The data come from the RNA Mapping Database (RMDB), library M2PK50. An RNA of 177 nucleotides, treated with 2A3 and DMS and read out base by base. The reactions ran in a buffer of 150 mM KOAc, 10 mM MgCl2 and 150 mM bicine (pH 8.5), at 24 C. For 2A3, 2,939 sequencing reads were counted.
[RMDB]
RNA sequence: GGGAACGACUCGAGUAGAGUCGAAAACCAAGGUAGUUCGCUACCUUGGAAAGAAAGCUCGAGCGAAGGGAAGGGAAAGGACGCACGAGCAACCCACCCAAAAAAGAGCAUGCUUCGGCAUGCUCAACAAGCAGAAGUUGUUCGCAACUUCUGCUUGAAAAGAAACAACAACAACAAC
Reactivity to 2A3 in 0.01 (KOAc 150mM, MgCl2 10mM, bicine 150mM(pH8.5), 24C), signal-to-noise 2, nucleotides 027 to 126: c000c000a000a010g010g000u000a010g030u000u090c220g050c110u000a000c010c000u000u000g000g000a030a020a030g040a010a060a000g000c010u000c000g010a000g000c030g030a110a080g100g020g070a080a080g090g010g030a100a160a120g080g030a030c000g000c000a000c020g020a010g010c010a040a080c000c010c020a050c000c010c000a080a160a020a000a060a020g000a000g000c010a000u010g000c000u060u050c140g030g000c000a000u000g000c000u010c000a000a000
Reactivity to DMS in 0.01 (KOAc 150mM, MgCl2 10mM, bicine 150mM(pH8.5), 24C), signal-to-noise 1, nucleotides 027 to 126: c010c030a060a000g000g000u000a000g000u000u000c230g000c000u000a000c000c000u000u000g000g000a040a030a150g030a060a110a140g000c000u000c010g000a070g000c020g000a200a090g000g040g000a130a120g000g020g000a070a070a070g020g020a120c070g000c010a060c000g010a090g000c000a050a030c060c030c000a200c080c040c060a000a050a020a060a080a140g000a030g030c010a010u000g010c010u000u000c200g030g030c020a000u000g000c000u000c000a010a040